[RMDB]
RNA sequence: GGGAACGACUCGAGUAGAGUCGAAAAGGAUGUGAGGAAGGUACUAUGUACUUUGUGCCUAGAGCUAAGUCUGUUGUCUCAAGGAUUGGAGACUCCAUCUUUACAGGCUGUACUGGCUCUUGGAACACACGACCAGUGUUUUCGAACACUGGUCGUGAAAAGAAACAACAACAACAAC
Reactivity to DMS in 0.01 (KOAc 150mM, MgCl2 10mM, bicine 150mM(pH8.5), 24C), signal-to-noise 1, nucleotides 027 to 126: g020g000a010u010g000u030g010a100g010g020a070a020g010g010u000a020c030u020a190u040g000u010a040c030u000u010u040g020u000g000c000c000u000a000g000a010g010c020u010a060a020g000u000c010u010g000u000u000g040u010c070u000c090a200a080g010g050a120u030u020g000g000a080g000a050c100u000c010c010a060u000c010u000u020u000a040c050a000g000g000c010u000g020u000a090c290u000g000g000c000u000c000u000u070g020g010a100a040c040a110
Reactivity to 2A3 in 0.01 (KOAc 150mM, MgCl2 10mM, bicine 150mM(pH8.5), 24C), signal-to-noise 3, nucleotides 027 to 126: g080g000a070u120g080u130g060a070g070g070a150a020g020g020u040a020c010u060a110u200g070u050a030c030u080u050u050g030u040g040c000c000u020a000g000a000g010c010u060a040a000g010u000c010u010g040u080u030g040u050c030u010c050a060a090g030g140a160u070u290g100g010a060g030a100c040u080c010c000a130u040c000u020u090u020a010c000a000g020g000c020u050g090u210a110c150u130g030g000c000u000c030u010u010g010g030a070a000c030a000